[RMDB]
RNA sequence: GGGAACGACUCGAGUAGAGUCGAAAAUGUAAUCGAAAUCAUUAACCCGAACAUUCGCAACUCUGAAGAUGAACCAACGUUAGCGGAGUGGGCCGGGUUCAAAGAAGGAGACCGCUUAACGGUUGAAUGCUAUAGCGACGGCACAAAGUGGGCGCAAACUUCGACUAUGAUUCGUCAUAGUCGAAGUAAAAGAAACAACAACAACAAC
Reactivity to DMS in 0.01 (KOAc 150mM, MgCl2 10mM, bicine 150mM(pH8.5), 24C), signal-to-noise 2, nucleotides 027 to 156: u000g020u000a050a100u020c060g010a150a080a090u010c060a070u010u000a080a100c030c020c020g000a090a080c050a130u000u010c020g060c080a050a120c040u000c050u000g020a070a130g020a130u000g010a070a210c080c030a030a060c060g010u010u000a120g000c020g020g010a100g010u030g020g030g030c170c020g010g070g040u000u010c090a070a070a070g000a150a100g000g020a300g030a080c000c010g070c050u000u000a070a130c060g010g000u000u000g000a100a080u000g010c020u000a090u000a050g020c040g040a160c030g020g000c020a120c080a030a090a150g040u010g010g000g040c010g020c080a050a090
Reactivity to 2A3 in 0.01 (KOAc 150mM, MgCl2 10mM, bicine 150mM(pH8.5), 24C), signal-to-noise 3, nucleotides 027 to 156: u070g000u060a090a080u110c100g010a090a030a080u100c050a050u090u090a040a070c010c000c010g020a050a020c040a130u060u080c010g000c020a020a040c030u030c050u130g070a090a040g050a130u100g050a030a040c020c000a040a060c100g030u030u020a000g010c040g010g060a060g030u050g000g080g000c070c000g020g010g000u020u050c080a160a040a020g050a030a010g010g020a030g040a030c000c020g030c080u130u040a070a050c020g070g000u030u010g040a070a050u060g000c010u040a020u040a160g030c020g020a030c030g030g010c070a020c040a070a110a010g030u060g000g070g000c020g000c030a070a060

Chemical mapping of a 207-nucleotide RNA with DMS and 2A3. For 2A3 the reverse transcriptase was SuperScript II with manganese. The 2A3 profile rests on 1,583 reads. The RNA was probed in 150 mM KOAc, 10 mM MgCl2 and 150 mM bicine (pH 8.5) at 24 C. For DMS, 2,382 sequencing reads were counted.